Structure probing data (2A3) for a 207-nucleotide construct.
RNA sequence: GGGAACGACUCGAGUAGAGUCGAAAACUGCCGCCGGGACGCAGUGAUCCUCGCAGGGUCGCACCGUCGCCUCGGGUCGGCCUCGUGUCGGCUCGACCUGCGAGGGGAGCGAGUGGCGAGCCCGACCAAAACUUUCUCGCCUUCGGGCGAGAAAGAACAUUCUACCCUGGUUCGCCAGGGUAGAAUGAAAAGAAACAACAACAACAAC
Reactivity to 2A3 in 0.01 (KOAc 150mM, MgCl2 10mM, bicine 150mM(pH8.5), 24C), signal-to-noise 1, nucleotides 027 to 156: c040u090g030c050c010g020c010c020g030g010g110a050c020g030c020a140g170u000g010a020u000c000c000u000c010g000c000a000g020g030g130u130c030g020c050a130c050c070g080u150c040g000c040c000u030c000g000g000g020u010c000g010g000c020c040u150c100g280u300g000u010c000g000g000c000u010c010g020a030c000c000u000g000c010g000a010g000g000g030g000a000g020c020g000a060g050u060g000g010c010g020a030g000c000c010c000g030a020c020c050a000a100a000a070c000u000u000u040c000u000c000g000c010c040u040u040c200g050g000g000c000g000a000g000a010a000a000g000a000a000
Reactivities are rounded to 0.1 and cut off at 0 and 3. For 2A3, 1,050 sequencing reads were counted.